[RMDB]
RNA sequence: GGGAACGACUCGAGUAGAGUCGAAAAUUCACCAGUUUCUGGAUCAGUUAGAGGCUGUGGGUCAACUUCAUCUGGAGCUGGUAGGUAAUCUACAACAGCGUCAAGAACAAGCUGGAUACCUUUGUUCCUACCCACCGGAAUUCGUUCCGGUGGGUAGAAAAGAAACAACAACAACAAC
Reactivity to DMS in 0.01 (KOAc 150mM, MgCl2 10mM, bicine 150mM(pH8.5), 24C), signal-to-noise 1, nucleotides 027 to 126: u010u020c130a090c010c000a080g010u000u000u000c020u010g000g000a020u000c110a040g020u000u020a170g000a130g010g040c060u000g060u000g000g010g000u000c010a040a030c020u020u000c150a060u010c010u010g040g000a040g000c010u000g000g010u000a010g010g000u000a050a140u000c040u020a060c080a110a200c050a030g000c040g020u000c080a080a110g010a070a060c130a050a110g010c010u030g000g020a050u020a020c040c020u000u000u000g000u010u000c010
Reactivity to 2A3 in 0.01 (KOAc 150mM, MgCl2 10mM, bicine 150mM(pH8.5), 24C), signal-to-noise 1, nucleotides 027 to 126: u080u080c010a060c000c000a030g000u120u250u000c010u020g030g010a060u010c010a000g060u040u160a110g030a080g300g000c060u110g130u300g180g150g000u050c030a010a000c040u040u050c050a060u040c000u000g000g070a010g020c020u030g000g000u000a010g010g000u090a160a080u070c070u110a120c080a160a000c010a050g040c000g090u110c080a140a040g080a130a050c030a100a000g080c000u000g040g000a030u040a040c000c000u020u050u030g130u070u040c020